RNA sequence: GGGAACGACUCGAGUAGAGUCGAAAAAACAAACAUCAAAUCGCAUAGCAAAGAGUCAAAAAAAUAGAGAGCUUUGCGAGACCUACCAAGGGUGAAGAGAUAGCAUCCAAGGAGCUGAAGAGAAAUCGAGAGCUCACGGCGUUCGCGCCGUGAGCAACUACGUUCUUAGGUUCGCCUAAGAACGUAGAAAAGAAACAACAACAACAAC
Reactivity to 2A3 in 0.01 (KOAc 150mM, MgCl2 10mM, bicine 150mM(pH8.5), 24C), signal-to-noise 2, nucleotides 027 to 156: a000a000c230a050a080a050c100a110u160c060a080a070a070u060c010g000c020a010u010a040g000c050a080a160a040g080a110g120u100c160a160a190a100a050a070a110a000u300a070g110a020g000a000g020c000u030u110u010g000c000g010a000g000a040c000c000u000a060c070c020a030a030g000g030g000u000g040a120a020g130a000g020a030u090a070g000c010a040u000c000c020a010a040g020g010a000g070c070u060g040a080a030g030a040g010a040a120a010u160c090g030a050g000a020g230c030u000c000a010c020g000g070c010g000u040u070c180g000c020g000c000c000g000u000g010a010g000c000a000a000
An RNA of 207 nucleotides, treated with 2A3 and read out base by base. Conditions: 150 mM KOAc, 10 mM MgCl2 and 150 mM bicine (pH 8.5), 24 C. The data come from the RNA Mapping Database (RMDB), library M2RFPK. For 2A3 the reverse transcriptase was SuperScript II with manganese.